[RMDB]
RNA sequence: GGGAACGACUCGAGUAGAGUCGAAAAUGGGUGUCGCACACCAGACGGCAAGAUAUUCUCGGGGGAAUUUGGGAAGUGAGACUUAAUCGGGAAUAGAGUGACAGCCCCGUGUGCCCCGCAGCCCUGCAGUAUUAACGACUUUCGAGUCGUUAAUACUAAAAGAAACAACAACAACAAC
Reactivity to 2A3 in 0.01 (KOAc 150mM, MgCl2 10mM, bicine 150mM(pH8.5), 24C), signal-to-noise 5, nucleotides 027 to 126: u110g010g000g000u070g110u200c050g010c000a000c000a010c030c020a020g060a060c050g020g010c040a040a020g020a100u030a010u080u030c030u020c010g020g020g000g010g050a080a100u160u210u120g120g060g010a070a050g050u120g100a080g020a040c010u030u070a050a050u120c010g010g000g010a000a010u010a050g090a050g060u100g030a030c040a040g030c000c000c030c000g000u020g000u020g020c020c000c010c000g020c030a040g020c010c000c010u010g020c010
Reactivity to DMS in 0.01 (KOAc 150mM, MgCl2 10mM, bicine 150mM(pH8.5), 24C), signal-to-noise 6, nucleotides 027 to 126: u000g020g010g020u000g010u000c100g030c010a090c020a050c050c120a100g010a090c140g020g000c020a060a060g000a130u000a020u000u000c020u000c010g020g000g010g010g000a110a140u000u010u000g010g010g010a070a100g020u000g010a130g010a300c030u000u000a040a060u010c020g020g000g000a040a030u000a040g000a080g010u000g000a110c120a110g010c040c010c040c290g000u010g020u000g000c000c010c020c030g010c140a100g000c020c010c010u000g000c120